[RMDB]
RNA sequence: GGGAACGACUCGAGUAGAGUCGAAAACACAAGCGCGGAUUGUGUCACCGAUAAUCUUAACCAUAUCGGUGCGCUCCAGUGAGCCGCCCUCUUGCUUAAUCAGGCGCACGUCAUGCUUAUCUAACGUCACAAAGUAUACGUUAGCAAGGAUAUGAAGGAACCAAGGACUAUUCGUAGUCCUUGGUUCAAAAGAAACAACAACAACAAC
Reactivity to 2A3 in 0.01 (KOAc 150mM, MgCl2 10mM, bicine 150mM(pH8.5), 24C), signal-to-noise 4, nucleotides 027 to 156: c100a010c020a040a110g020c030g040c050g040g040a040u090u170g040u020g110u140c000a000c000c000g010a030u090a090a140u160c150u220u180a100a090c060c030a040u020a010u040c020g000g000u010g000c020g010c000u040c030c030a020g050u010g070a010g010c030c020g030c010c020c000u060c010u020u070g080c030u050u090a040a080u170c040a030g060g040c000g000c010a010c040g110u030c010a070u060g040c020u040u100a090u140c000u030a020a020c000g050u000c080a020c050a200a210a020g080u160a120u020a130c000g000u000u010a000g020c040a040a020g070g030a020u060a060u220g050a030a040g160
Reactivity to DMS in 0.01 (KOAc 150mM, MgCl2 10mM, bicine 150mM(pH8.5), 24C), signal-to-noise 1, nucleotides 027 to 156: c020a050c060a030a060g030c070g060c090g040g040a170u000u000g000u020g020u040c020a040c000c030g020a020u000a020a130u000c000u000u000a200a280c170c100a160u020a030u010c000g010g000u010g010c060g020c020u000c040c020a150g020u010g020a090g020c000c030g010c020c010c030u000c050u020u000g000c050u070u000a090a140u010c040a080g000g030c040g020c030a060c050g020u050c050a050u020g000c040u000u020a120u000c010u010a000a010c030g000u000c060a300c100a090a100a210g050u010a300u010a020c020g050u010u010a020g000c090a020a080g020g000a070u000a030u000g000a100a160g010
Source: RMDB library OK3TST, as collected in RNAgym. Chemical mapping of a 207-nucleotide RNA with 2A3 and DMS. The DMS profile rests on 1,899 reads. The reactions ran in a buffer of 150 mM KOAc, 10 mM MgCl2 and 150 mM bicine (pH 8.5), at 24 C.